[RMDB]
RNA sequence: GGGAACGACUCGAGUAGAGUCGAAAAUGUCCGAGCGGCUAUCGCCGCUGACGGACACGUGGCGAAGAUUGGUCGCUGCAGUGGUAGGUAGAAACGUCUAUGCGCGCGUGAGCGUCUGGCGGCGGUGGGCGGUGGGCACGUUCGCGUGCCUGCCGCCAAAAGAAACAACAACAACAAC
Reactivity to DMS in 0.01 (KOAc 150mM, MgCl2 10mM, bicine 150mM(pH8.5), 24C), signal-to-noise 1, nucleotides 027 to 126: u000g060u020c000c030g000a070g000c150g060g020c040u040a060u010c130g010c000c020g000c000u000g050a040c010g000g030a050c000a040c130g000u000g000g000c010g000a110a010g000a030u010u020g000g010u000c010g060c010u030g000c020a070g000u030g060g040u000a120g000g000u010a010g010a020a090a090c100g000u000c000u000a040u000g000c040g000c000g000c010g020u020g000a100g010c000g000u020c020u020g010g020c000g000g000c050g010g000u000g010
Reactivity to 2A3 in 0.01 (KOAc 150mM, MgCl2 10mM, bicine 150mM(pH8.5), 24C), signal-to-noise 2, nucleotides 027 to 126: u190g010u000c020c010g020a030g010c070g160g010c000u070a000u220c170g000c010c000g020c000u000g020a000c000g000g150a000c000a000c020g050u020g100g000c000g000a040a000g000a040u060u120g040g000u020c000g000c010u010g020c020a010g000u080g060g010u100a040g020g000u040a050g050a010a110a000c010g000u000c000u000a090u230g080c060g000c030g000c000g000u060g060a080g120c030g000u020c010u040g080g000c000g000g000c000g010g020u030g000